[RMDB]
RNA sequence: GGGAACGACUCGAGUAGAGUCGAAAAAGCAAUUCUAAGUUGGCGAAGAUAGCCAAUUAAUGCCUUCUAAGUGCGUGGAAGCUCGCUGAGUUACCCGCAGCCAAAUCCUUAAUUUGAAAGGAUGCAGUUCACAGACUAACUGAAGGCGGGUCCUUCUAUUUAAUUGACACUUCGGUGUCAAUUAAAUAAAAGAAACAACAACAACAAC
Reactivity to 2A3 in 0.01 (KOAc 150mM, MgCl2 10mM, bicine 150mM(pH8.5), 24C), signal-to-noise 3, nucleotides 027 to 156: a000g100c070a060a080u200u070c050u260a110a040g010u010u000g030g040c050g060a080a030g180a300u170a050g040c000c010a010a000u050u100a000a050u120g000c000c010u010u000c020u080a090a100g020u030g060c020g010u140g030g020a060a010g000c020u020c080g300c250u200g000a000g020u000u020a050c000c020c020g000c010a030g010c000c050a020a110a060u030c000c000u080u060a200a260u280u190u300g170a150a030a000g000g000a010u020g040c040a030g040u040u080c090a060c020a080g030a040c050u030a070a030c050u060g020a000a010g010g020c000g000g050g020u000c010c000u000u000c000u000
Reactivity to DMS in 0.01 (KOAc 150mM, MgCl2 10mM, bicine 150mM(pH8.5), 24C), signal-to-noise 1, nucleotides 027 to 156: a140g010c070a030a110u000u010c020u000a120a120g060u020u000g030g060c010g020a180a130g050a220u000a140g000c020c010a000a110u010u000a070a040u000g050c020c020u000u000c000u000a110a140g010u000g010c080g080u010g000g020a110a110g050c020u000c020g000c090u020g030a040g020u010u000a080c020c050c000g020c020a090g030c030c020a050a170a090u010c010c000u000u020a070a190u000u000u010g010a090a020a050g110g020a010u000g010c100a130g020u000u000c050a130c000a090g010a140c020u000a060a090c050u000g020a030a020g020g060c030g050g000g000u000c040c000u000u000c020u000

Conditions: 150 mM KOAc, 10 mM MgCl2 and 150 mM bicine (pH 8.5), 24 C. An RNA of 207 nucleotides, treated with 2A3 and DMS and read out base by base. Reactivities are given for positions 27 through 156.